[RMDB]
RNA sequence: GGGAACGACUCGAGUAGAGUCGAAAAAUACACCAGCAGUAGGACUCAGCGACCGUCACAACAAGGUUGUGCUGGUAUCCGACGGUCGUAUAGCCCUGUCUUGCAGGUUGCCUUGCACUGACGUGCCGCGCGAUGACCGCUUAUUCGUAAGCGGUAAAUGUGAAAUUUAAUUCGUUAAAUUUCACAUAAAAGAAACAACAACAACAAC
Reactivity to DMS in 0.01 (KOAc 150mM, MgCl2 10mM, bicine 150mM(pH8.5), 24C), signal-to-noise 5, nucleotides 027 to 156: a120u010a100c060a180c030c010a070g050c030a050g030u010a050g030g010a050c010u010c080a190g020c000g010a020c000c010g020u010c030a210c110a130a120c170a070a120g020g020u000u000g020u000g030c010u000g010g020u000a070u000c070c030g010a040c020g020g010u000c030g050u010a100u010a040g010c000c010c010u010g010u000c060u000u000g010c030a090g010g010u010u000g000c040c090u000u000g020c040a090c060u010g010a100c160g000u000g020c010c070g030c070g020c040g020a150u000g010a100c000c000g010c010u010u000a070u000u010c270g030u000a010a010g020c000g020g020u000a000a030
Reactivity to 2A3 in 0.01 (KOAc 150mM, MgCl2 10mM, bicine 150mM(pH8.5), 24C), signal-to-noise 6, nucleotides 027 to 156: a000u120a020c070a010c010c000a000g000c010a010g020u130a020g010g020a030c000u010c040a010g000c000g010a000c010c000g000u000c020a060c040a220a120c070a220a150g050g000u020u020g030u030g020c010u020g010g020u020a030u020c030c030g000a010c000g000g000u000c010g000u010a020u030a030g000c010c010c010u020g060u050c060u050u100g010c030a030g020g060u080u100g040c020c010u030u070g000c020a030c060u130g070a060c090g020u040g020c010c010g040c010g010c020g070a070u130g060a020c000c010g000c000u010u020a010u030u030c110g050u020a020a010g010c000g010g010u010a040a050
Chemical mapping of a 207-nucleotide RNA with DMS and 2A3. The DMS profile rests on 19,390 reads.